[RMDB]
RNA sequence: GGGAACGACUCGAGUAGAGUCGAAAAGCGUCCACGGAUUGCUGGUGCCGCCCUUGACCGUCGGGUCGUUGGCGACGAUCAUGCAUUCCACGCCGCAGACCGCGCCGAUGCCGGUGACCAGGCUGGCACCAGAAGAGCAAUUCGUUGCUCUUCUGGUAAAAGAAACAACAACAACAAC
Reactivity to DMS in 0.01 (KOAc 150mM, MgCl2 10mM, bicine 150mM(pH8.5), 24C), signal-to-noise 6, nucleotides 027 to 126: g010c060g010u000c050c090a140c180g010g010a030u000u000g020c010u000g010g020u010g010c010c010g020c060c000c070u000u000g000a020c030c000g000u010c280g020g020g010u000c020g020u010u010g000g000c020g010a040c020g010a020u000c010a060u020g010c020a070u010u010c040c040a190c190g010c090c050g010c030a090g000a080c030c020g000c060g000c030c040g000a060u000g000c030c020g000g020u000g000a100c090c060a100g000g000c010u000g010g010c080
Reactivity to 2A3 in 0.01 (KOAc 150mM, MgCl2 10mM, bicine 150mM(pH8.5), 24C), signal-to-noise 3, nucleotides 027 to 126: g020c010g030u010c050c030a040c080g000g010a050u040u070g010c020u020g000g050u030g020c010c000g040c000c010c000u020u060g020a030c030c020g190u230c300g170g010g000u020c010g000u020u040g020g010c010g000a060c020g020a030u040c030a060u230g010c000a010u080u000c000c000a020c040g030c010c020g000c000a020g030a060c000c010g010c030g010c020c020g220a250u130g000c000c010g020g050u040g060a100c040c000a020g070g000c010u030g000g000c010

Conditions: 150 mM KOAc, 10 mM MgCl2 and 150 mM bicine (pH 8.5), 24 C.
An RNA of 177 nucleotides, treated with DMS and 2A3 and read out base by base.
2A3 is a SHAPE reagent: it acylates the 2'-hydroxyl of flexible nucleotides of all four kinds.
The 2A3 profile rests on 8,371 reads.
2A3 adducts were read by reverse transcription with SuperScript II with manganese.
Reactivities are rounded to 0.1 and cut off at 0 and 3.
In probing experiments dimethyl sulfate is read out at A N1 and C N3, which are open when not base-paired.